This 207-nucleotide RNA was probed chemically with 2A3 and DMS. High 2A3 reactivity points to a flexible backbone, as in loops and unpaired stretches. Reactivities are given for positions 27 through 156. For 2A3 the reverse transcriptase was SuperScript II with manganese. For 2A3, 1,086 sequencing reads were counted.
[RMDB]
RNA sequence: GGGAACGACUCGAGUAGAGUCGAAAAUAAGCAAAAGACAACCACCUUUCCCGCUGACAAUAGCGUUAUCCCUCUGCACUUUGGUAAUAUGAGGGCACAGUAAAUCCCGCAAGGAUGAGAAUGUGAUUAAACAGUUACAGCUUCGGCUGUAACUGAAGUAAGCAGGUUAGUUCGCUAACCUGCUUACAAAAGAAACAACAACAACAAC
Reactivity to 2A3 in 0.01 (KOAc 150mM, MgCl2 10mM, bicine 150mM(pH8.5), 24C), signal-to-noise 2, nucleotides 027 to 156: u100a040a000g020c040a070a050a020a080g080a100c040a000a060c040c050a080c020c010u040u070u080c030c010c000g040c040u050g060a120c110a160a170u130a080g040c050g100u160u110a130u100c000c010c000u010c010u050g010c060a070c140u150u090u170g130g010u070a020a030u080a050u180g000a000g000g000g010c020a000c000a010g010u020a000a000a070u000c000c000c020g100c140a020a000g000g020a000u010g000a000g000a020a010u040g000u000g010a030u100u210a150a100a050c000a000g000u000u000a000c000a010g010c020u040u110c160g070g000c000u010g000u000a000a000c000u000g000a020a010
Reactivity to DMS in 0.01 (KOAc 150mM, MgCl2 10mM, bicine 150mM(pH8.5), 24C), signal-to-noise 1, nucleotides 027 to 156: u000a060a070g030c020a110a020a100a110g020a120c080a270a110c070c040a070c020c010u000u000u000c000c020c020g090c000u020g030a180c140a150a070u000a070g000c030g020u000u020a080u000c020c000c000u000c020u000g000c060a110c130u000u000u000g010g010u000a030a110u000a100u010g000a020g030g020g020c080a020c060a130g020u000a040a170a080u000c000c000c020g020c270a090a110g090g000a070u000g000a040g000a090a130u000g020u000g000a060u030u010a070a130a220c010a010g000u000u000a030c000a030g010c010u000u020c300g060g040c000u000g000u000a010a000c010u000g010a000a010